[RMDB]
RNA sequence: GGGAACGACUCGAGUAGAGUCGAAAAGCGUAGCCGACCUGAGAAGGUGACCGGCCACAGCGGGACUGCGACACGGCGCAGACUCCUACGGGAGGCAGCAGCGGGGAAUAUCGCACAAUGCGCCGAGAAAAUAUAUGAAAUUCGUUUCAUAUAUUUUAAAAGAAACAACAACAACAAC
Reactivity to 2A3 in 0.01 (KOAc 150mM, MgCl2 10mM, bicine 150mM(pH8.5), 24C), signal-to-noise 9, nucleotides 027 to 126: g030c040g030u050a010g010c010c000g050a080c010c010u060g030a050g020a120a040g030g020u040g070a060c030c030g010g010c010c020a040c030a020g030c010g010g020g030a030c030u040g020c020g030a030c030a020c150g010g020c010g000c010a020g020a120c010u020c000c010u020a070c210g070g010g010a020g020g000c060a050g030c020a000g010c040g020g010g010g020a110a070u150a070u230c040g020c050a040c050a070a100u040g000c000g000c010c000g010a010g050
Reactivity to DMS in 0.01 (KOAc 150mM, MgCl2 10mM, bicine 150mM(pH8.5), 24C), signal-to-noise 9, nucleotides 027 to 126: g020c050g010u010a100g010c020c000g000a060c010c020u000g000a220g010a200a020g000g010u010g010a110c220c020g010g010c020c070a030c050a110g020c020g000g000g000a130c050u000g010c030g000a130c150a160c020g000g020c010g000c010a020g000a130c020u000c000c000u000a110c130g020g010g000a040g010g000c120a070g010c090a080g000c040g000g020g010g010a120a100u050a100u030c060g000c050a090c110a060a120u000g010c000g010c010c000g010a130g000